This 177-nucleotide RNA was probed chemically with DMS.
Conditions: 150 mM KOAc, 10 mM MgCl2 and 150 mM bicine (pH 8.5), 24 C.
Source: RMDB library TTRDEL, as collected in RNAgym.
RNA sequence: GGGAACGACUCGAGUAGAGUCGAAAAGAUAUGGAGACCCAACGUUGAAACACCGAGUCGGAAACGACUCGUGUGGAGUUGCUCCUAAGUCAAAAGGCGGCAUAACACUUCGGUGUUAUGCCGCCAACUUUAAUGCUAAGUUCGCUUAGCAUUAAAGAAAAGAAACAACAACAACAAC
Reactivity to DMS in 0.01 (KOAc 150mM, MgCl2 10mM, bicine 150mM(pH8.5), 24C), signal-to-noise 2, nucleotides 027 to 126: g010a080u010a300u020g000g000a090g000a160c160c210c060a010a040c060g010u010u000g010a200a100a150c010a010c050c040g020a020g000u000c000g000g010a100a070a200c010g000a010c010u000c000g000u000g000u000g010g000a130g000u000u000g000c010u000c010c000u000a060a100g010u000c040a070a080a160a100g000g020c010g000g000c000a010u030a000a000c010a000c020u000u010c210g030g010u000g000u000u000a000u000g000c050c020g000c000c010a020a030
The DMS profile rests on 1,840 reads.